[RMDB]
RNA sequence: GGGAACGACUCGAGUAGAGUCGAAAAGUGCCAACGAUUCGUCGUUGGCACAAAAAACCUUUGUGCCUGGACAUGGCACCACCACGACCCAUUGGGUCGGGUGAGUGCCAACAGCCAGGCACUCUGGUAAAAACACAUAGGAUUCGUCCUAUGUGAAGUGAAUAUCCUGGUUCGCCAGGAUAUUCACAAAAGAAACAACAACAACAAC
Reactivity to 2A3 in 0.01 (KOAc 150mM, MgCl2 10mM, bicine 150mM(pH8.5), 24C), signal-to-noise 1, nucleotides 027 to 156: g010u010g000c010c000a010a010c010g010a020u070u080c240g050u010c020g000u270u020g020g130c020a000c020a000a000a000a010a000a010c000c010u000u000u000g000u000g000c020c000u000g020g030a190c130a290u110g010g000c000a010c000c000a000c000c000a210c090g010a000c040c000c020a240u130u300g000g000g000u010c010g000g000g040u000g010a010g010u000g000c050c010a050a000c060a040g000c000c000a000g010g010c000a000c000u000c010u010g030g030u080a180a030a000a030a000c000a000c000a000u000a020g000g010a010u060u040c300g080u010c070c010u000a000u000g000u000g000a000a000

Record summary
Structure probing data (2A3) for a 207-nucleotide construct. The reactions ran in a buffer of 150 mM KOAc, 10 mM MgCl2 and 150 mM bicine (pH 8.5), at 24 C. 2A3 adducts were read by reverse transcription with SuperScript II with manganese. Values cover nucleotides 27 to 156. For 2A3, 772 sequencing reads were counted. Source: RMDB library RNAMAK, as collected in RNAgym.